[RMDB]
Chemical mapping of a 177-nucleotide RNA with DMS and 2A3. For DMS, 1,460 sequencing reads were counted. The data come from the RNA Mapping Database (RMDB), library M2PK50. For DMS the reverse transcriptase was MarathonRT. The 2A3 profile rests on 2,383 reads.
RNA sequence: GGGAACGACUCGAGUAGAGUCGAAAAGGGUUUUGGUUCGCCAAAACCCAAAAUAAAAAGUACGAAAGGCAACGUACGCCAAAAAGAACGAAAGAUCAAAAAAAACUCAUUCCUUCGGGAAUGAGAACAAACAGGAAGAGUUCGCUCUUCCUGUUUGAAAAGAAACAACAACAACAAC
Reactivity to DMS in 0.01 (KOAc 150mM, MgCl2 10mM, bicine 150mM(pH8.5), 24C), signal-to-noise 2, nucleotides 027 to 126: g000g000g000u000u000u010u000g000g000u000u020c230g030c000c000a000a000a020a010c000c000c000a000a010a020a060u020a060a060a040a150a140g000u000a020c020g030a060a120a120g020g030c160a100a030c000g000u000a000c010g000c040c030a030a060a050a050a080g000a060a100c040g000a100a080a080g020a040u020c040a010a000a000a090a040a080a050a070c010u000c000a010u010u000c000c000u000u010c140g010g000g020a030a000u000g000a000g000a040a100
Reactivity to 2A3 in 0.01 (KOAc 150mM, MgCl2 10mM, bicine 150mM(pH8.5), 24C), signal-to-noise 2, nucleotides 027 to 126: g000g000g000u000u000u000u000g060g000u040u080c140g100c020c020a010a000a010a000c010c000c000a030a000a010a000u050a010a030a020a010a000g010u000a010c010g140a290a000a080g230g000c050a130a010c040g000u010a000c020g010c000c020a040a120a130a040a020g050a070a030c060g040a060a040a030g070a050u140c220a060a030a000a000a000a030a070a120c000u000c000a010u000u010c000c000u020u080c210g070g000g010a000a000u000g000a000g000a000a000